An RNA of 177 nucleotides, treated with 2A3 and DMS and read out base by base. The data come from the RNA Mapping Database (RMDB), library M2PK50. Reactivities are rounded to 0.1 and cut off at 0 and 3. The RNA was probed in 150 mM KOAc, 10 mM MgCl2 and 150 mM bicine (pH 8.5) at 24 C.
[RMDB]
RNA sequence: GGGAACGACUCGAGUAGAGUCGAAAAGUGCGACAUUUCGAUGUCGCACAAACCCAAAUGGUGGCACCUAACUUAACAAGCCGGGAAAAGCCAGAUGCCAACGUCCUUAGCCCUUCGGGGCUAAGAAAACAAUUACGGAAUUCGUUCCGUAAUUGUUAAAAGAAACAACAACAACAAC
Reactivity to 2A3 in 0.01 (KOAc 150mM, MgCl2 10mM, bicine 150mM(pH8.5), 24C), signal-to-noise 5, nucleotides 027 to 126: g000u000g000c000g000a000c000a010u050u040u100c200g110a010u020g000u000c000g000c000a000c000a000a000a000c020c000c000a040a060a020u140g020g000u030g010g000c040a130c070c010u050a090a090c030u110u090a090a030c060a130a020g040c070c000g000g010g010a060a130a010a000g010c040c030a020g010a080u110g030c010c010a040a030c040g060u050c010c000u000u000a010g000c000c020c000u020u070c210g040g000g000g000c000u000a000a000g000a010a030
Reactivity to DMS in 0.01 (KOAc 150mM, MgCl2 10mM, bicine 150mM(pH8.5), 24C), signal-to-noise 7, nucleotides 027 to 126: g020u000g000c000g010a010c000a010u000u000u010c180g010a020u000g010u000c000g010c010a010c000a000a070a110c000c000c010a090a100a070u010g020g010u000g010g000c040a050c010c010u000a080a060c050u000u010a060a200c080a080a100g020c090c060g000g010g000a060a090a050a060g010c030c050a040g000a050u000g010c020c020a030a050c070g000u010c140c000u000u000a000g000c000c000c000u000u000c180g020g010g010g010c000u000a000a000g000a050a060
Description:
2A3 adducts were read by reverse transcription with SuperScript II with manganese. For DMS, 10,548 sequencing reads were counted.